[RMDB]
RNA sequence: GGGAACGACUCGAGUAGAGUCGAAAAGGCGGUUUUACAUACUGGUCAGACACGGCUGGAGGCCAAGGUCAAGUUGAAAGUUGCAGUCCAGCCAGCAUGAGAACUGCCAUGCGAGCGUAGAGACACAUCAUUCCAUACAGUUCGCUGUAUGGAAUGAAAAAGAAACAACAACAACAAC
Reactivity to DMS in 0.01 (KOAc 150mM, MgCl2 10mM, bicine 150mM(pH8.5), 24C), signal-to-noise 3, nucleotides 027 to 126: g010g010c010g020g010u000u000u000u010a140c030a020u000a040c030u010g000g010u010c080a170g020a040c050a300c060g000g000c000u000g000g020a280g000g010c020c060a090a110g020g000u000c130a110a130g010u010u000g020a170a070a030g020u000u000g010c100a060g010u000c010c020a170g000c000c010a040g000c000a010u000g010a110g010a040a030c020u010g010c000c000a050u000g010c070g010a040g000c070g000u000a030g000a110g000a070c110a050c210a140
Reactivity to 2A3 in 0.01 (KOAc 150mM, MgCl2 10mM, bicine 150mM(pH8.5), 24C), signal-to-noise 2, nucleotides 027 to 126: g000g000c010g000g030u000u010u020u030a140c030a000u040a010c000u030g000g030u030c020a010g010a010c010a010c040g010g000c000u030g040g050a030g050g000c070c080a070a060g160g060u140c080a050a040g010u030u040g060a040a040a010g000u000u050g100c120a060g020u010c010c000a000g000c000c000a010g020c010a000u000g000a000g010a050a000c000u000g000c000c010a010u090g070c070g060a080g040c050g060u070a030g010a030g030a140c030a020c010a140